Chemical mapping of a 177-nucleotide RNA with 2A3. For 2A3, 4,389 sequencing reads were counted. 2A3 adducts were read by reverse transcription with SuperScript II with manganese. The RNA was probed in 150 mM KOAc, 10 mM MgCl2 and 150 mM bicine (pH 8.5) at 24 C.
RNA sequence: GGGAACGACUCGAGUAGAGUCGAAAACAUGUGCGCUUGAACUGCGGCGGUCGGGCAGAGUCGAGAGCCCUUCUGGUUCGUUGCUUGACUGAAGAAAUAUUCAUCAAGCUGCGGUGCCGCGGCACCGUCUACUGUUCGGGUUCGCUCGGACGGUAGAAAAAGAAACAACAACAACAAC
Reactivity to 2A3 in 0.01 (KOAc 150mM, MgCl2 10mM, bicine 150mM(pH8.5), 24C), signal-to-noise 1, nucleotides 027 to 126: c040a050u120g030u040g030c040g000c050u090u110g060a060a030c030u060g010c020g020g010c000g020g020u020c020g000g000g000c030a040g030a020g170u120c070g080a020g010a050g140c000c030c000u010u050c050u090g100g020u060u070c020g000u030u080g000c000u010u010g020a080c140u000g000a020a000g000a000a300a020u300a170u040u020c000a020u000c000a000a000g000c010u030g000c030g050g000u090g020c010c010g080c160g040g000c010a010c000c000g030